[RMDB]
Structure probing data (2A3) for a 207-nucleotide construct.
The 2A3 profile rests on 557 reads.
For 2A3 the reverse transcriptase was SuperScript II with manganese.
The RNA was probed in 150 mM KOAc, 10 mM MgCl2 and 150 mM bicine (pH 8.5) at 24 C.

RNA sequence: GGGAACGACUCGAGUAGAGUCGAAAACGAAGGAAAGCUUGACCAGCUAAUCUUCUGCAACGCCAUUACGAGGACUGCCCUUAGAGGCUCAUGGCGAUAGGUCACCCCGCCGGUCGGUCACCUGCUUAUACCCGUGCACGGUUCGCCGUGCACGGAAGGUACUCAGACGAUUCGUCGUCUGAGUACCAAAAGAAACAACAACAACAAC
Reactivity to 2A3 in 0.01 (KOAc 150mM, MgCl2 10mM, bicine 150mM(pH8.5), 24C), signal-to-noise 1, nucleotides 027 to 156: c030g000a000a000g050g060a220a130a000g010c030u010u050g000a030c000c000a000g000c000u020a040a120u090c010u030u020c010u130g050c050a110a060c030g000c010c010a030u110u190a090c100g030a090g130g070a070c060u120g000c030c000c000u070u120a050g020a060g110g000c010u000c040a010u020g000g000c000g080a100u130a070g020g000u000c060a030c000c000c030c000g070c010c010g000g000u070c030g010g000u060c020a030c000c010u080g000c050u130u070a020u050a240c000c000c060g020u000g010c000a010c000g000g120u060u010c180g000c050c010g000u020g000c020a000c040g000g000a000a010